Structure probing data (2A3) for a 207-nucleotide construct. 2A3 adducts were read by reverse transcription with SuperScript II with manganese. The data come from the RNA Mapping Database (RMDB), library M2RFPK. For 2A3, 1,184 sequencing reads were counted.

RNA sequence: GGGAACGACUCGAGUAGAGUCGAAAAGAAAGCAAGAAAUUAGCUCGCCAGUUAGCGAGGUCUGUCCCCACACGACAGAUAAUCGGGUGCAACUCCCGCCCCUUUUCCGAGGGUCAUCGGAACCAAAAAAACUCAGGCAACUUCGGUUGCCUGAGAAGAUUUCCCACUAGUUCGCUAGUGGGAAAUCAAAAGAAACAACAACAACAAC
Reactivity to 2A3 in 0.01 (KOAc 150mM, MgCl2 10mM, bicine 150mM(pH8.5), 24C), signal-to-noise 2, nucleotides 027 to 156: g030a030a030a000g020c040a060a020g060a160a130a050u140u090a110g040c020u010c000g000c000c050a150g150u190u200a000g000c000g000a010g010g000u020c000u010g010u020c040c040c030c000a050c010a000c070g010a000c000a010g000a020u030a030a080u070c000g000g010g010u010g010c010a000a010c000u020c020c000c000g000c000c000c000c000u070u140u060u010c000c000g000a000g000g000g060u120c010a010u010c000g030g010a020a030c020c010a030a060a050a050a040a050a060c000u000c000a000g000g000c000a000a000c000u010u110c200g090g020u000u000g000c010c000u010g000a000g000a000a000